[RMDB]
The record gives the reactivity of an RNA of 177 nucleotides to DMS and 2A3. Source: RMDB library RFM100, as collected in RNAgym. Conditions: 150 mM KOAc, 10 mM MgCl2 and 150 mM bicine (pH 8.5), 24 C. The 2A3 profile rests on 1,040 reads.
RNA sequence: GGGAACGACUCGAGUAGAGUCGAAAAACUCGCGGUGUACGCACCGCGAGAAGCAUUGACGAAUGCUACCGUAGAAGUCCGCCUGGUUUUAUAACUACGGAUAACAUCACCGGUACGCCGGUGAUGAAAUAGUGGACUCGUUCGCGAGUCCACUAUUAAAAGAAACAACAACAACAAC
Reactivity to DMS in 0.01 (KOAc 150mM, MgCl2 10mM, bicine 150mM(pH8.5), 24C), signal-to-noise 1, nucleotides 027 to 126: a240c010u010c000g060c000g020g000u000g000u010a140c300g000c000a000c000c000g060c010g010a020g000a080a000g000c030a010u000u000g000a130c300g020a060a030u000g010c010u000a060c010c010g000u000a060g020a220a170g000u000c000c020g000c050c030u010g000g010u000u000u080u010a120u010a100a100c000u000a100c000g000g020a100u010a070a150c040a030u000c000a000c000c020g000g040u000a120c170g010c000c000g030g000u000g000a000u000g000a070
Reactivity to 2A3 in 0.01 (KOAc 150mM, MgCl2 10mM, bicine 150mM(pH8.5), 24C), signal-to-noise 2, nucleotides 027 to 126: a030c000u000c000g000c000g000g020u010g030u060a040c260g000c100a000c010c010g020c000g020a000g000a000a000g000c000a020u100u160g140a090c090g100a060a010u060g020c030u070a050c000c000g030u050a060g070a190a030g010u020c030c000g100c020c090u090g060g030u130u080u110u070a160u090a190a010c010u030a000c010g010g030a020u100a030a040c000a000u000c000a000c000c010g020g000u040a020c230g030c030c000g000g000u000g000a000u000g010a010